[RMDB]
RNA sequence: GGGAACGACUCGAGUAGAGUCGAAAAUGCCUGCAUUGUUCCAAGAGUGUCUUGGACAAAAGCAGGAAGUGGAACCUUGUUAAGGUCGGAACGAACUGCCUUAAGGAAGUCGAUGCUCCAGGUCCGUCAUAAGAUCGCACUUCGGUGCGAUCUUAUGAAAAGAAACAACAACAACAAC
Reactivity to DMS in 0.01 (KOAc 150mM, MgCl2 10mM, bicine 150mM(pH8.5), 24C), signal-to-noise 1, nucleotides 027 to 126: u000g010c000c040u000g000c000a230u050u000g010u010u010c000c000a000a020g010a300g000u040g000u000c000u000u000g000g000a020c000a000a000a090a300g020c000a000g000g000a020a040g010u050g000g000a000a120c070c000u030u000g080u000u000a080a020g010g000u000c190g000g000a030a070c200g070a100a150c050u000g000c030c000u040u050a030a100g000g040a020a020g000u070c080g020a110u010g000c040u000c010c000a020g020g010u000c000c070g000u080
Reactivity to 2A3 in 0.01 (KOAc 150mM, MgCl2 10mM, bicine 150mM(pH8.5), 24C), signal-to-noise 3, nucleotides 027 to 126: u090g040c030c020u000g000c030a100u000u020g050u230u070c030c000a000a040g020a020g110u300g120u150c000u000u000g000g000a010c010a000a020a000a040g000c000a000g020g020a020a030g110u110g020g050a040a060c010c000u010u080g110u040u100a060a020g030g040u100c090g020g040a180a050c070g020a040a060c020u040g040c020c000u120u060a050a040g090g000a100a000g010u030c060g000a010u070g070c000u000c010c000a010g000g030u010c020c000g010u000